This 207-nucleotide RNA was probed chemically with DMS and 2A3. Values cover nucleotides 27 to 156. DMS adducts were read by reverse transcription with MarathonRT. The RNA was probed in 150 mM KOAc, 10 mM MgCl2 and 150 mM bicine (pH 8.5) at 24 C. The 2A3 profile rests on 3,144 reads.

[RMDB]
RNA sequence: GGGAACGACUCGAGUAGAGUCGAAAAGAUCUGCACCGAUCCGAAACGCUAGCAAACAGCCCGCAUCAUGUCGUCUCCUAACUUCGACGUGGUGAAAUACUGAGCUUAUGCGAGUAAGCCUGUUAGCAAUAGAUCAGAACGUUCGCGUUCUGAUCAAGCUCUGUAGAAUCUUCGGAUUCUACAGAGCAAAAGAAACAACAACAACAAC
Reactivity to DMS in 0.01 (KOAc 150mM, MgCl2 10mM, bicine 150mM(pH8.5), 24C), signal-to-noise 1, nucleotides 027 to 156: g000a010u000c070u010g000c060a130c100c100g000a070u040c020c040g020a090a110a120c160g040c010u010a050g000c040a120a040a140c180a040g010c010c010c040g000c040a030u020c000a040u010g000u000c000g040u000c100u000c080c110u000a060a130c040u000u010c010g030a060c010g020u000g010g010u030g010a050a050a140u000a100c030u020g000a100g000c000u010u000a240u020g000c200g010a160g000u000a000a090g020c040c010u070g030u000u000a080g010c030a130a100u000a150g000a010u000c010a000g020a040a000c000g010u010u010c300g000c040g010u000u010c000u040g010a030u000c000a020a040
Reactivity to 2A3 in 0.01 (KOAc 150mM, MgCl2 10mM, bicine 150mM(pH8.5), 24C), signal-to-noise 4, nucleotides 027 to 156: g010a020u030c040u120g050c070a040c050c090g030a060u030c020c050g030a010a080a040c070g000c030u040a030g010c020a100a040a120c030a090g060c010c010c010g050c000a000u020c000a010u000g010u010c010g010u000c040u110c100c070u120a140a180c060u070u030c010g010a000c000g010u020g000g000u030g000a030a040a010u160a040c070u030g040a030g020c010u060u030a020u110g080c040g000a040g060u010a020a010g010c010c030u030g010u050u060a010g000c020a060a110u040a190g010a000u010c010a000g000a000a000c010g020u060u050c180g000c000g090u000u000c030u030g000a000u000c000a000a000